[RMDB]
Structure probing data (2A3) for a 207-nucleotide construct. Values cover nucleotides 27 to 156. The reactions ran in a buffer of 150 mM KOAc, 10 mM MgCl2 and 150 mM bicine (pH 8.5), at 24 C.

RNA sequence: GGGAACGACUCGAGUAGAGUCGAAAAUAGAUGAUCGUAUAUGUGAAUUGCAGAUGACGGGUGCCGAUCUCUGUAAUUUGACUAGAGUGGAUACUAGCUCAGAUGCAUUUUAUACAGCUGGUUUAGUUCGACCAGCUUCAGCAGCAUUAAUUGCAGACCCUUGGUAGUGGUUCGCCACUACCAAGGGAAAAGAAACAACAACAACAAC
Reactivity to 2A3 in 0.01 (KOAc 150mM, MgCl2 10mM, bicine 150mM(pH8.5), 24C), signal-to-noise 1, nucleotides 027 to 156: u200a000g130a020u090g010a000u100c040g060u120a090u000a040u300g060u040g090a030a040u010u000g010c000a000g000a050u160g020a100c100g050g030g080u170g060c050c000g100a300u030c020u000c000u000g010u010a040a020u000u000u050g040a000c000u010a040g030a050g010u150g060g020a070u050a170c020u090a080g010c030u000c080a000g000a020u020g000c000a000u060u120u060u040a070u070a150c040a010g000c000u000g020g000u040u020u020a020g020u100u040c010g020a010c000c000a000g000c030u020u020c040a070g000c000a010g050c000a060u150u070a110a080u290u130g000c070a100g080a140
The data come from the RNA Mapping Database (RMDB), library OK3TST.